The record gives the reactivity of an RNA of 207 nucleotides to DMS and 2A3. For 2A3 the reverse transcriptase was SuperScript II with manganese. DMS adducts were read by reverse transcription with MarathonRT. The reactions ran in a buffer of 150 mM KOAc, 10 mM MgCl2 and 150 mM bicine (pH 8.5), at 24 C. The data come from the RNA Mapping Database (RMDB), library OK3TST. The DMS profile rests on 2,850 reads.
RNA sequence: GGGAACGACUCGAGUAGAGUCGAAAAGGACGUCUUGUUGCAGCCACCGCCACGGACGCCGCAGUGAUCACAGGCUUAUGGGCUGCGUGGAAAGCCGAUCGUGAUGCGGUGAUUGCUGCUGGAUGCGCGGUAGAGGCGCACCGAUGAGCCGCAACGGACUUCCGAACAAUUUCGAUUGUUCGGAAGUAAAAGAAACAACAACAACAAC
Reactivity to DMS in 0.01 (KOAc 150mM, MgCl2 10mM, bicine 150mM(pH8.5), 24C), signal-to-noise 1, nucleotides 027 to 156: g030g000a060c080g020u000c030u010u000g020u010u000g020c000a070g000c020c010a050c020c010g000c010c010a030c050g020g020a090c050g050c060c000g010c060a100g030u000g020a100u000c010a110c040a090g000g010c030u000u000a080u000g050g010g000c020u000g000c060g030u020g020g000a130a150a060g000c030c030g020a170u010c010g080u010g020a060u000g030c020g000g040u000g000a090u000u010g040c010u000g000c000u010g010g000a130u010g010c010g010c050g000g000u010a110g020a140g020g000c000g000c020a130c060c090g050a110u050g010a120g030c000c000g000c030a080a030c030g000g020
Reactivity to 2A3 in 0.01 (KOAc 150mM, MgCl2 10mM, bicine 150mM(pH8.5), 24C), signal-to-noise 3, nucleotides 027 to 156: g010g010a010c010g010u040c010u110u140g130u090u120g010c020a010g010c010c000a010c010c010g000c000c040a020c050g080g030a050c040g000c010c010g000c020a020g020u050g060a080u110c070a040c040a100g060g030c020u100u110a030u220g050g010g030c000u020g020c020g030u080g040g060a170a090a020g020c040c020g050a110u080c020g010u040g010a080u190g030c010g040g000u000g020a050u000u110g010c000u000g000c010u010g000g000a050u030g030c020g000c000g060g000u100a060g030a060g130g030c020g000c010a020c020c000g000a040u040g070a010g010c010c010g000c030a030a030c010g000g040